Chemical mapping of a 207-nucleotide RNA with 2A3. The 2A3 profile rests on 635 reads. The RNA was probed in 150 mM KOAc, 10 mM MgCl2 and 150 mM bicine (pH 8.5) at 24 C. Source: RMDB library OK3TST, as collected in RNAgym.

[RMDB]
RNA sequence: GGGAACGACUCGAGUAGAGUCGAAAAUGCAUGUGUGCGUGCACCAUGCACGUGUGUGCUGAUGUACAUGCAUGCAUACAUGUAUGUGUGGGUGUGCACGUGUGCAUUGUGUGCAUAUAUGCACGUUAAUGCAUAUGUAUGUGUGCAUGCCUGGGUAUACCAGUGCAGGGUUCGCCCUGCACUGGUAAAAAGAAACAACAACAACAAC
Reactivity to 2A3 in 0.01 (KOAc 150mM, MgCl2 10mM, bicine 150mM(pH8.5), 24C), signal-to-noise 1, nucleotides 027 to 156: u020g000c010a000u000g000u000g000u000g040c000g020u000g020c000a020c030c020a060u130g080c030a000c020g230u300g030u080g000u010g020c050u090g080a090u090g080u060a120c040a170u080g020c000a000u000g010c000a000u000a030c030a000u010g020u060a040u020g170u090g040u080g000g000g000u000g000u000g000c000a020c000g000u000g000u010g000c000a000u000u000g000u060g010u000g070c100a020u060a030u030a090u300g000c020a000c000g000u020u220a020a040u010g000c020a020u000a000u020g180u090a140u160g300u120g000u010g030c000a000u070g000c020c000u040g170g000g000u120a030